[RMDB]
RNA sequence: GGGAACGACUCGAGUAGAGUCGAAAAGCCGUGCUCGAGAGGGAGCAGAAAAUGCAGAGCUAUCCCGUCGUUUCGCUAUACAAAUGCGAAACGACAAAUUGCGUUACAUACGCAAUCCUCUAAUGAAGUCUUGACUAGCUUUCGAGCUAGUCAAGACAAAAGAAACAACAACAACAAC
Reactivity to 2A3 in 0.01 (KOAc 150mM, MgCl2 10mM, bicine 150mM(pH8.5), 24C), signal-to-noise 2, nucleotides 027 to 126: g010c000c030g040u060g000c000u000c020g080a050g020a000g060g070g000a000g020c020a010g140a010a260a040a010u210g020c090a020g020a020g050c000u030a050u060c020c010c010g000u010c000g000u000u000u000c000g000c000u020a020u000a250c060a020a070a010u100g000c000g000a010a000a000c010g010a000c010a000a090a000u010u000g010c000g030u020u080a190c090a090u190a050c040g000c000a000a020u010c010c030u060c030u080a100a120u220g090a150a040
Reactivity to DMS in 0.01 (KOAc 150mM, MgCl2 10mM, bicine 150mM(pH8.5), 24C), signal-to-noise 1, nucleotides 027 to 126: g020c020c080g070u020g030c000u000c000g000a050g000a050g000g000g030a070g050c000a110g020a090a030a120a060u010g000c120a100g050a140g040c020u000a160u000c010c000c000g010u000c000g000u020u010u010c000g020c000u000a040u010a210c300a080a060a080u000g010c000g000a050a000a030c000g010a000c000a040a020a000u000u000g000c000g020u010u000a060c290a090u020a020c000g020c010a040a000u000c020c030u000c000u050a180a110u010g000a120a120
About this RNA:
This 177-nucleotide RNA was probed chemically with 2A3 and DMS. Conditions: 150 mM KOAc, 10 mM MgCl2 and 150 mM bicine (pH 8.5), 24 C. Source: RMDB library M2PK90, as collected in RNAgym.